The record gives the reactivity of an RNA of 177 nucleotides to 2A3 and DMS. Source: RMDB library OK1LIB, as collected in RNAgym. For DMS the reverse transcriptase was MarathonRT.
RNA sequence: GGGAACGACUCGAGUAGAGUCGAAAAAGGGUUCUGUAAACAUUUUUCUCGGGAGCACGAGGAAGCAAAUCCAUUCACGUAGUCAUUCCUGCAUUGUUCUCUUUGAAAAGAGUUUCACCAGUUGAGCCCAUUAGCUCCUAUUCGUAGGAGCUAAUGGAAAAGAAACAACAACAACAAC
Reactivity to 2A3 in 0.01 (KOAc 150mM, MgCl2 10mM, bicine 150mM(pH8.5), 24C), signal-to-noise 8, nucleotides 027 to 126: a000g110g000g000u100u120c110u100g090u130a030a090a060c060a120u060u050u010u050u030c020u010c010g020g010g020a110g050c050a050c090g020a020g010g030a030a000g020c050a030a060a070u060c040c020a030u110u140c070a050c110g080u070a060g040u060c030a110u030u040c000c010u030g030c050a090u030u080g010u050u010c010u000c000u040u060u080g090a080a080a030a020g080a020g020u020u050u030c120a140c060c020a020g010u070u050g060a030g030c000
Reactivity to DMS in 0.01 (KOAc 150mM, MgCl2 10mM, bicine 150mM(pH8.5), 24C), signal-to-noise 4, nucleotides 027 to 126: a110g020g010g000u010u000c040u000g000u020a050a030a050c040a090u000u000u010u000u000c010u000c120g000g010g020a050g000c070a060c230g010a060g000g000a020a040g020c110a110a070a120u020c090c060a090u030u030c130a070c110g010u020a090g010u010c080a150u010u010c010c010u000g000c100a110u000u000g000u010u000c000u010c000u020u010u000g010a040a010a030a070g010a080g000u000u010u000c040a090c060c060a100g000u030u000g000a030g020c050